[RMDB]
RNA sequence: GGGAACGACUCGAGUAGAGUCGAAAAAUUUAAGUGCCAGGACGGUCACCUUUGGGGUGGUGACAAGUGUGAUCACUUGGGUGGUGGCUGUGUUUGCGUGUCUCCCAGGAAUCUCGUUUACCAGAUCAAAUGCGUAGGAGUUCGCUCCUACGCAUUUAAAAGAAACAACAACAACAAC
Reactivity to 2A3 in 0.01 (KOAc 150mM, MgCl2 10mM, bicine 150mM(pH8.5), 24C), signal-to-noise 2, nucleotides 027 to 126: a000u290u300u160a110a000g040u040g000c030c000a040g020g000a000c000g050g000u020c000a010c000c030u140u180u170g040g020g010g000u070g000g000u030g020a040c050a080a090g050u050g000u070g230a060u120c020a000c000u000u020g120g000g060u050g000g080u020g000g000c000u000g000u000g020u040u030u010g020c030g000u080g010u000c000u000c000c000c010a030g000g080a120a040u010c020u000c040g040u040u060u020a110c040c080a020g000a050u130c010
Reactivity to DMS in 0.01 (KOAc 150mM, MgCl2 10mM, bicine 150mM(pH8.5), 24C), signal-to-noise 2, nucleotides 027 to 126: a070u050u000u070a040a080g000u000g020c050c010a070g040g000a050c050g000g000u000c000a000c020c010u000u020u000g000g010g010g030u000g010g040u000g010a070c020a190a100g050u060g030u000g000a050u000c020a050c010u000u010g000g020g000u000g000g000u010g000g010c000u000g030u000g010u000u040u010g020c120g020u010g000u020c050u020c000c030c000a140g000g000a050a040u010c110u040c020g020u010u000u020a190c020c040a110g000a060u040c090